[RMDB]
Structure probing data (DMS and 2A3) for a 177-nucleotide construct. Reactivities are rounded to 0.1 and cut off at 0 and 3. DMS adducts were read by reverse transcription with MarathonRT. The data come from the RNA Mapping Database (RMDB), library OK2TST. For DMS, 940 sequencing reads were counted.
RNA sequence: GGGAACGACUCGAGUAGAGUCGAAAAGAGCCAAUCAUGCCCAUCAAAAAGGGAUAGCCGUACUUGAGGUUGAUUCCAAACAUUGCUGGUUCAGUUACUCCUAGGUAGGCCGAUAUGGUGGCAGGGAGAACUCUUCACCUUUCGAGGUGAAGAGUUCAAAAGAAACAACAACAACAAC
Reactivity to DMS in 0.01 (KOAc 150mM, MgCl2 10mM, bicine 150mM(pH8.5), 24C), signal-to-noise 2, nucleotides 027 to 126: g010a140g010c020c050a080a050u000c070a160u010g010c100c020c020a040u010c100a020a040a090a230a070g000g030g030a080u000a060g010c040c030g010u000a100c190u010u000g000a120g000g020u000u000g000a040u010u010c050c060a080a080a060c070a150u000u000g000c110u000g020g030u000u000c020a030g010u000u000a140c060u000c030c040u010a110g010g020u000a160g000g000c020c100g000a070u000a080u010g010g010u030g000g040c020a120g010g000g040a090
Reactivity to 2A3 in 0.01 (KOAc 150mM, MgCl2 10mM, bicine 150mM(pH8.5), 24C), signal-to-noise 1, nucleotides 027 to 126: g030a000g000c030c050a000a080u150c050a030u120g030c020c070c000a030u100c090a040a220a050a030a030g000g000g010a020u050a030g050c060c050g160u140a120c090u020u090g040a040g000g000u080u080g040a120u090u000c010c000a040a050a010c090a210u140u210g010c050u040g080g000u040u010c010a000g000u020u090a060c000u000c020c000u010a020g000g020u070a040g040g090c040c000g080a100u120a050u170g030g040u010g040g040c000a030g040g010g000a090